[RMDB]
RNA sequence: GGGAACGACUCGAGUAGAGUCGAAAAUCACCAGAUGCUGCAUCACCUGAUCACUGAUGGCUCAACGGGAUCCGGCGGUACAACUGAAUACUUGUAGCUGCCUUUUGAGCGGGUUGGCUGCAAUCCGAAAAGAGGACACACUUCGGUGUGUCCUCAAGUGUACCCUUAACUUCGGUUAAGGGUACACAAAAGAAACAACAACAACAAC
Reactivity to 2A3 in 0.01 (KOAc 150mM, MgCl2 10mM, bicine 150mM(pH8.5), 24C), signal-to-noise 2, nucleotides 027 to 156: u090c010a010c050c010a010g020a040u110g030c030u030g020c000a030u020c010a050c040c010u030g030a020u100c020a040c160u100g020a090u080g110g030c070u030c030a070a090c050g000g030g000a030u050c060c000g090g000c040g030g000u090a060c010a080a100c140u140g080a180a120u110a150c050u030u040g020u000a000g040c010u010g000c020c000u060u060u100u120g040a010g000c070g010g000g050u210u240g050g020c010u000g000c010a000a050u050c050c020g030a020a030a060a080g010a020g000g000a000c010a000c000a000c020u030u160c140g040g000u000g010u000g000u010c000c000u010c000a000a000
Source: RMDB library M2RFPK, as collected in RNAgym.
This 207-nucleotide RNA was probed chemically with 2A3.
The RNA was probed in 150 mM KOAc, 10 mM MgCl2 and 150 mM bicine (pH 8.5) at 24 C.